Annotation
Structure probing data (2A3) for a 207-nucleotide construct.
RNA sequence: GGGAACGACUCGAGUAGAGUCGAAAAGUUGAGAGCGUUUAACUUAAGUCUUUUUUAUUAGCUUAAAAAAACUAUAUACAAGUGGUGGUAGUCCGCCACUCUAAGAGGACGCCUUUAGAAGAAGAGGGAAAGGCACUAAGCUUCGGCUUAGUGCCAACAUAACGAAUCUCUUCGGAGAUUCGUUAUGAAAAGAAACAACAACAACAAC
Reactivity to 2A3 in 0.01 (KOAc 150mM, MgCl2 10mM, bicine 150mM(pH8.5), 24C), signal-to-noise 1, nucleotides 027 to 156: g050u050u060g040a030g000a020g080c000g010u000u040u060a110a140c030u070u110a090a050g040u100c120u040u080u070u050u020u030a140u150u150a070g010c030u040u030a000a070a000a000a000a070a000c180u160a170u050a060u060a160c050a070a000g000u010g040g040u010g010g000u020a030g140u030c030c000g000c000c000a040c000u000c010u020a050a070g040a040g020g020a000c000g020c000c010u030u150u120a100g000a140a000g010a030a000g000a080g050g040g080a090a200a180g020g000c000a000c000u010a010a000g000c000u010u140c300g000g000c000u000u000a020g000u010g010c000c000a000a000
2A3 adducts were read by reverse transcription with SuperScript II with manganese. For 2A3, 691 sequencing reads were counted.